Chemical mapping of a 177-nucleotide RNA with DMS.

[RMDB]
RNA sequence: GGGAACGACUCGAGUAGAGUCGAAAAGUUCGGGCCUUCGGGCCCGAACAAAUAAUCCAGCCUGGAAAGGCUGGAGCCUAAACUAUGGAAAACGCACCAUAGAAACCACAUGGUUCGCCAUGUGGAAGUUUACACACCUUUUCGAAGGUGUGUAAACAAAAGAAACAACAACAACAAC
Reactivity to DMS in 0.01 (KOAc 150mM, MgCl2 10mM, bicine 150mM(pH8.5), 24C), signal-to-noise 1, nucleotides 027 to 126: g000u000u000c000g040g000g000c010c000u000u010c290g020g060g030c000c010c050g000a000a000c020a000a030a030u000a110a120u000c000c000a000g020c000c000u000g010g060a200a110a000g020g010c000u000g000g000a030g010c020c040u000a030a080a170c000u000a030u000g000g000a090a070a060a140c300g000c230a130c020c000a030u000a000g000a110a090a170c020c010a000c000a010u020g000g010u000u000c270g060c000c000a000u030g010u000g000g000a020a020
The reactions ran in a buffer of 150 mM KOAc, 10 mM MgCl2 and 150 mM bicine (pH 8.5), at 24 C. It was measured as part of the RMDB library M2PK50. Reactivities are given for positions 27 through 126.